This 177-nucleotide RNA was probed chemically with DMS and 2A3. DMS adducts were read by reverse transcription with MarathonRT. Conditions: 150 mM KOAc, 10 mM MgCl2 and 150 mM bicine (pH 8.5), 24 C. Source: RMDB library TTRDEL, as collected in RNAgym. For 2A3 the reverse transcriptase was SuperScript II with manganese.
RNA sequence: GGGAACGACUCGAGUAGAGUCGAAAAGAUAUGGACCUCGAAAGCUUGGAUUUAUCAGUGAACUCGGAAACGAGACUGAUUGUCAGCUUUCCGGGUCCUAAGUCAAACAAGCAGUUCGCUGCUUGAAUCCACUUUCUUACUUCGGUAAGAAAGUGGAAAAAGAAACAACAACAACAAC
Reactivity to DMS in 0.01 (KOAc 150mM, MgCl2 10mM, bicine 150mM(pH8.5), 24C), signal-to-noise 2, nucleotides 027 to 126: g010a020u000a300u010g000g010a030c000c000u000c300g000a000a000a010g000c000u000u010g020g000a000u010u020u000a020u000c000a000g010u000g000a070a160c010u010c000g000g000a090a060a210c110g020a030g020a100c000u000g000a010u000u000g000u000c000a030g000c010u000u000u000c020c160g020g000g010u000c000c030u000a010a120g000u000c060a120a120a240c010a000a000g000c000a010g000u000u000c300g020c010u000g010c000u010u000g000a110a130
Reactivity to 2A3 in 0.01 (KOAc 150mM, MgCl2 10mM, bicine 150mM(pH8.5), 24C), signal-to-noise 2, nucleotides 027 to 126: g000a000u060a050u130g000g010a010c000c030u020c040g020a050a000a000g010c080u240u270g100g010a030u140u300u210a030u070c000a000g010u030g300a080a100c010u020c010g000g020a060a100a060c050g020a040g110a110c000u000g000a000u010u000g020u020c000a000g000c000u000u000u000c020c000g040g020g000u000c000c000u000a010a000g000u030c010a040a070a130c000a000a010g000c010a020g010u080u130c210g000c180u000g000c060u000u000g040a010a070